[RMDB]
RNA sequence: GGGAACGACUCGAGUAGAGUCGAAAACUUUGAGAUGGCGGAACUUGUAGCAGAAACCUUCCGAUGCAUUGGCGUAUCUGAUAACGAAGAUGGAACCUAUACCAUCUCGGGGCUUUCAUACCGUGCUGACAAGUUUGCCUAUAUUGAUGACGGUACGAUUUACAAACGUUUUCGAACGUUUGUAAAUAAAAGAAACAACAACAACAAC
Reactivity to DMS in 0.01 (KOAc 150mM, MgCl2 10mM, bicine 150mM(pH8.5), 24C), signal-to-noise 3, nucleotides 027 to 156: c040u000u000u000g010a150g000a170u000g020g010c010g010g020a060a060c050u010u000g030u000a060g000c020a060g010a110a090a040c070c030u000u000c040c040g020a100u000g000c050a190u010u010g030g000c060g040u000a060u000c070u010g020a140u000a100a160c100g010a120a070g000a050u010g010g030a110a100c090c100u010a110u010a110c040c020a020u000c010u010c000g010g030g000g000c080u000u000u000c050a160u000a080c090c070g000u010g020c020u000g000a100c040a030a090g020u000u000u010g010c030c020u010a130u000a100u010u000g020a090u000g000a130c090g000g010u000a090c070g000
Reactivity to 2A3 in 0.01 (KOAc 150mM, MgCl2 10mM, bicine 150mM(pH8.5), 24C), signal-to-noise 5, nucleotides 027 to 156: c020u100u110u230g090a120g020a050u120g030g030c050g060g030a010a000c010u010u000g000u020a020g000c040a030g060a030a050a020c020c000u060u000c020c040g020a010u030g010c040a090u040u250g200g020c120g020u030a030u000c010u020g020a040u030a120a010c050g050a100a050g010a010u010g000g010a020a050c030c020u100a110u070a160c020c000a010u000c010u000c000g010g020g000g000c040u080u100u040c040a050u080a190c040c070g060u070g040c010u050g060a040c000a000a020g000u010u000u030g000c000c000u050a060u010a020u080u110g120a120u070g030a030c060g040g030u100a040c050g040
The record gives the reactivity of an RNA of 207 nucleotides to DMS and 2A3. For DMS the reverse transcriptase was MarathonRT. The 2A3 profile rests on 3,806 reads. The reactions ran in a buffer of 150 mM KOAc, 10 mM MgCl2 and 150 mM bicine (pH 8.5), at 24 C.